Annotation: Chemical mapping of a 207-nucleotide RNA with 2A3 and DMS. It was measured as part of the RMDB library OK3TST. For 2A3, 1,398 sequencing reads were counted. 2A3 adducts were read by reverse transcription with SuperScript II with manganese.

RNA sequence: GGGAACGACUCGAGUAGAGUCGAAAAAAGCUCUUAGGUGUGGGUGCGCAGAAGGCAUUCGCUUAUGACCUCAUGGAUGGGAGUAUUCGCUAAUGCUGAUCAUGCGCCCGCAAAAGCAGGUCAUGCACUACAAGAAAGCUGAAGGCGCUCAAGACGAUGUACCAGCUAAUUUCGAUUAGCUGGUACAAAAAGAAACAACAACAACAAC
Reactivity to 2A3 in 0.01 (KOAc 150mM, MgCl2 10mM, bicine 150mM(pH8.5), 24C), signal-to-noise 3, nucleotides 027 to 156: a000a000g050c030u030c020u070u060a150g030g020u030g010u010g090g050g010u090g020c050g000c010a010g020a120a040g020g000c000a000u000u000c000g010c010u030u030a040u070g090a050c000c010u010c070a140u130g130g170a180u120g090g050g010a120g010u040a040u090u070c090g010c030u050a020a000u020g000c020u020g010a240u210c030a060u060g000c010g010c000c000c000g040c010a040a060a000a000g010c040a010g000g060u050c020a020u070g000c100a050c070u100a050c050a060a000g080a180a040a000g030c020u010g020a000a000g080g000c050g000c020u020c050a030a050g000a040c030g000a010
Reactivity to DMS in 0.01 (KOAc 150mM, MgCl2 10mM, bicine 150mM(pH8.5), 24C), signal-to-noise 1, nucleotides 027 to 156: a080a050g000c010u000c030u010u000a080g000g010u000g000u000g000g020g100u000g000c000g060c050a100g020a120a270g000g010c000a060u000u000c090g010c010u000u000a030u010g000a110c040c000u010c070a200u000g020g010a160u010g000g000g020a300g000u000a060u000u000c050g010c040u000a040a080u020g000c030u000g010a120u000c060a080u000g030c020g000c030c010c000g090c020a050a040a060a140g010c060a060g000g010u010c020a030u000g040c020a090c020u000a090c070a060a070g010a060a070a090g010c000u000g030a080a040g010g050c060g020c010u020c050a050a100g010a130c020g020a230